[RMDB]
RNA sequence: GGGAACGACUCGAGUAGAGUCGAAAAGGUUCUCCUGCUCUUCCGGAGCCUUCUUUCGAGGUCUUCCGCGUCUUUUCUUGCUUGGAUCCAUUUCUCGAGGACGUCCUCCCUUCCUCCCCUCCGGGUCGUUAUAAUACAACUUCGGUUGUAUUAUAACAAAAGAAACAACAACAACAAC
Reactivity to 2A3 in 0.01 (KOAc 150mM, MgCl2 10mM, bicine 150mM(pH8.5), 24C), signal-to-noise 5, nucleotides 027 to 126: g030g010u070u050c020u020c030c020u050g040c030u030c030u150u060c040c030g030g020a020g010c010c000u050u050c020u040u130u080c050g020a020g020g020u010c020u060u020c040c010g020c030g050u030c030u030u130u070u030c040u060u120g040c010u030u060g050g020a040u050c030c010a090u070u090u020c020u010c020g010a020g040g040a110c010g040u020c010c000u020c000c000c000u030u030c000c000u010c010c010c010c000u010c010c010g030g000g020u020c030
Reactivity to DMS in 0.01 (KOAc 150mM, MgCl2 10mM, bicine 150mM(pH8.5), 24C), signal-to-noise 5, nucleotides 027 to 126: g010g010u000u000c030u000c010c050u000g010c070u000c040u010u000c080c070g000g010a090g000c100c020u000u000c090u000u010u000c080g010a060g010g000u000c050u000u000c020c050g020c120g000u000c040u000u010u000u000c060u010u000g010c040u000u000g000g000a090u000c040c060a130u000u010u000c010u000c030g000a060g010g010a140c100g000u000c030c030u000c010c010c010u000u000c010c010u000c010c030c000c010u000c020c020g010g000g020u010c130